[RMDB]
RNA sequence: GGGAACGACUCGAGUAGAGUCGAAAACUCUGAAGGCAUGAUCACCCCGUCCGAUGCGGAAGUUCGUGCUUCCGUCGAACGCGAAUGUCGGACGGCGGCCAUGAGUCGCAACGCAAAGCCGCGGCAAUAAGCUCGUCGUCGUUCGCGACGACGAGAAGAUUAUGGACCCGUUCGCGGGUCCAUAAUCAAAAGAAACAACAACAACAAC
Reactivity to 2A3 in 0.01 (KOAc 150mM, MgCl2 10mM, bicine 150mM(pH8.5), 24C), signal-to-noise 1, nucleotides 027 to 156: c020u000c090u080g060a230a150g000g020c010a010u020g030a020u110c120a080c010c000c010c000g020u020c000c010g040a040u010g000c000g010g010a050a040g020u210u300c210g210u300g060c000u020u000c030c000g020u040c050g050a080a030c120g000c010g150a100a020u180g010u020c000g000g000a000c000g000g000c070g000g080c010c000a010u000g010a000g050u040c010g010c020a070a140c070g080c140a290a050a050g000c020c020g000c000g000g000c000a000a060u110a160a070g020c040u000c000g020u030c000g010u000c000g010u040u110c070g000c020g000a000c000g000a000c000g010a000g000a000a010